[RMDB]
The record gives the reactivity of an RNA of 177 nucleotides to 2A3 and DMS.
RNA sequence: GGGAACGACUCGAGUAGAGUCGAAAAGCUCUGAGAGACAGAUCGAACAACAAAGAGAGAUCGUAAAUCUUAGGGGAGAGAACGAAUCUGUCGUCUUCUCUAGGACAUUGUCGAUCAGAUGUCCAAAGACGAAUGAUUGGUUCGCCAAUCAUUCGUCAAAAGAAACAACAACAACAAC
Reactivity to 2A3 in 0.01 (KOAc 150mM, MgCl2 10mM, bicine 150mM(pH8.5), 24C), signal-to-noise 4, nucleotides 027 to 126: g030c010u010c000u000g020a020g010a010g000a010c000a020g010a010u020c020g050a030a080c050a090a010c020a060a300a030g120a010g010a000g000a020u010c010g000u030a050a070a030u000c000u000u000a010g000g000g020g000a010g000a000g000a080a050c080g020a060a130u150c070u160g140u040c020g100u000c000u020u000c000u000c000u010a000g000g000a010c030a110u080u160g000u020c020g000a010u000c000a000g000a010u050g050u000c000c000a070a020a020
Reactivity to DMS in 0.01 (KOAc 150mM, MgCl2 10mM, bicine 150mM(pH8.5), 24C), signal-to-noise 2, nucleotides 027 to 126: g000c080u000c000u000g000a000g000a300g000a010c070a130g070a010u040c000g020a300a300c040a020a150c300a020a080a050g000a030g000a220g000a020u000c000g010u070a100a010a110u000c000u000u000a040g000g030g010g070a010g000a120g010a000a010c020g010a110a060u040c080u040g000u000c080g000u000c000u000u000c000u000c000u070a010g000g000a000c020a180u040u000g000u010c000g010a170u000c000a010g000a000u030g040u010c030c040a110a010a080
DMS adducts were read by reverse transcription with MarathonRT. Values cover nucleotides 27 to 126. 2A3 adducts were read by reverse transcription with SuperScript II with manganese. Source: RMDB library OK1LIB, as collected in RNAgym. As a SHAPE reagent, 2A3 marks flexible, mostly unpaired nucleotides at the ribose 2'-OH.